Overview
An RNA of 177 nucleotides, treated with 2A3 and DMS and read out base by base. For 2A3, 6,881 sequencing reads were counted. For 2A3 the reverse transcriptase was SuperScript II with manganese. High 2A3 reactivity points to a flexible backbone, as in loops and unpaired stretches.
RNA sequence: GGGAACGACUCGAGUAGAGUCGAAAAGAUAUGGAACCCUUCUUGAACUACUUUCUCAGUCGGAAACGACUGAUGAAAGCAAGAGAGGGUUCCUAAGUCAAAAGACGUUCCGUUCGCGGAACGUCAAGUAAGUAAGCUUGUUCGCAAGCUUACUUACAAAAGAAACAACAACAACAAC
Reactivity to 2A3 in 0.01 (KOAc 150mM, MgCl2 10mM, bicine 150mM(pH8.5), 24C), signal-to-noise 1, nucleotides 027 to 126: g000a010u040a010u090g000g000a000a010c000c030c010u060u080c010u060u050g080a290a200c080u230a090c010u300u020u000c000u000c000a000g000u000c010g000g000a030a040a050c010g000a010c000u010g010a010u070g010a020a000a000g060c040a050a000g050a010g030a020g010g010g010u010u010c000c000u000a000a000g000u010c020a020a040a050a200g000a000c000g000u010u000c060c010g010u060u100c300g010c010g000g000a000a000c000g000u010c000a000a020
Reactivity to DMS in 0.01 (KOAc 150mM, MgCl2 10mM, bicine 150mM(pH8.5), 24C), signal-to-noise 4, nucleotides 027 to 126: g000a060u010a300u010g000g000a020a000c000c000c000u000u000c010u000u000g010a170a130c190u010a300c010u000u000u000c010u000c000a020g000u010c000g010g010a060a050a120c000g000a010c000u000g020a000u020g000a000a010a010g000c060a020a090g000a050g020a040g000g000g000u000u010c000c010u010a010a080g000u010c050a090a120a140a130g000a010c000g020u000u000c010c000g010u000u010c280g020c020g000g010a020a000c000g000u000c000a020a070